An RNA of 177 nucleotides, treated with 2A3 and read out base by base.
RNA sequence: GGGAACGACUCGAGUAGAGUCGAAAAACACGGAAACAAUGCCACAGUUGACUGAACCUGUCUUCUAACAGUAGUUAAUUGCCAGUGUUUCAAACAAGAUUUGAAAUACGAGUUUCCCAGAAUAAUUUACUUUGGGUGAGUUCGCUCACCCAAAGUAAAAAGAAACAACAACAACAAC
Reactivity to 2A3 in 0.01 (KOAc 150mM, MgCl2 10mM, bicine 150mM(pH8.5), 24C), signal-to-noise 1, nucleotides 027 to 126: a000c030a000c030g060g050a060a000a000c050a050a110u180g070c000c060a000c000a060g010u000u060g030a020c000u030g030a030a090c040c000u020g030u050c080u190u000c010u100a050a020c010a060g010u020a000g000u010u060a010a040u060u000g010c000c040a050g050u010g000u000u000u000c020a050a050a020c150a160a050g020a110u000u000u010g000a000a010a010u010a010c010g010a000g040u010u010u020c000c000c000a010g100a030a060u230a060a020u000u000
High 2A3 reactivity points to a flexible backbone, as in loops and unpaired stretches. The reactions ran in a buffer of 150 mM KOAc, 10 mM MgCl2 and 150 mM bicine (pH 8.5), at 24 C. Source: RMDB library RFM100, as collected in RNAgym.